[RMDB]
RNA sequence: GGGAACGACUCGAGUAGAGUCGAAAACGUGCGUACUGGGCCGCCGGCACAAUGUUCGACCCAGCCGUCUCAGAGGCCGCGGUUCGACCACGAUCAGCCAGCAGGUCAGCGGGGUCCUCCUAGCUAGAUCCCGAUUUAGUUUCGACUAAAUCGGGAUAAAAGAAACAACAACAACAAC
Reactivity to DMS in 0.01 (KOAc 150mM, MgCl2 10mM, bicine 150mM(pH8.5), 24C), signal-to-noise 2, nucleotides 027 to 126: c030g000u000g010c110g030u010a080c080u010g020g010g000c020c040g010c100c060g040g000c010a110c080a040a210u000g020u000u000c070g020a090c020c040c040a100g000c110c060g000u010c070u020c080a100g020a240g010g020c000c010g010c010g000g000u000u000c020g010a040c040c000a040c030g010a100u050c040a120g000c010c010a070g030c060a040g000g010u020c050a030g030c100g000g000g000g010u000c020c020u010c020c020u000a040g040c110u000a070g020
Reactivity to 2A3 in 0.01 (KOAc 150mM, MgCl2 10mM, bicine 150mM(pH8.5), 24C), signal-to-noise 1, nucleotides 027 to 126: c010g000u050g070c070g040u070a110c080u110g000g000g040c030c030g070c060c080g030g030c040a000c010a190a080u080g020u110u100c030g000a040c020c000c000a010g030c080c020g030u040c020u060c130a020g030a110g040g000c010c000g020c070g030g000u030u050c000g010a000c010c020a020c040g010a090u080c020a000g140c030c010a020g030c020a050g000g060u070c050a000g020c010g000g040g000g030u060c000c020u050c030c000u060a110g000c000u040a040g010
This 177-nucleotide RNA was probed chemically with DMS and 2A3. Values cover nucleotides 27 to 126. The DMS profile rests on 1,757 reads. It was measured as part of the RMDB library OK2TRN.